[RMDB]
RNA sequence: GGGAACGACUCGAGUAGAGUCGAAAAGAGGCGUACAGAUGGGGCUGCUGUGCCUCAUUUGUGUCAUAUGGUGGCAUAGAGCAAAAGGCUAUGUCUACGCUCGGUGUUCUCAGUCCAUGAACACUCAUGUCUGUACUGGCUUCGGCCAGUACAGACAAAAAGAAACAACAACAACAAC
Reactivity to DMS in 0.01 (KOAc 150mM, MgCl2 10mM, bicine 150mM(pH8.5), 24C), signal-to-noise 1, nucleotides 027 to 126: g040a080g000g000c020g000u000a020c000a000g000a000u000g010g000g000g000c000u040g000c140u000g080u020g060c000c020u000c000a060u000u000u020g020u000g010u000c010a260u070a110u050g000g110u040g000g010c010a010u000a020g000a040g010c100a070a230a170a210g000g000c010u060a040u080g050u000c030u050a020c150g000c020u030c080g020g000u000g000u000u020c000u010c100a100g020u030c080c020a010u000g010a000a150c130a040c020u000c170a070
Reactivity to 2A3 in 0.01 (KOAc 150mM, MgCl2 10mM, bicine 150mM(pH8.5), 24C), signal-to-noise 2, nucleotides 027 to 126: g030a010g000g030c000g040u040a000c000a000g000a050u010g010g010g000g000c010u120g100c060u160g170u170g110c020c040u040c000a000u000u010u000g030u000g000u000c000a030u040a020u300g270g000u050g020g000c000a000u000a000g080a050g030c090a120a030a160a000g130g000c000u070a090u070g050u030c040u080a010c010g020c000u140c030g000g000u000g020u000u010c000u000c070a000g040u030c000c050a050u110g060a000a000c050a010c070u100c080a100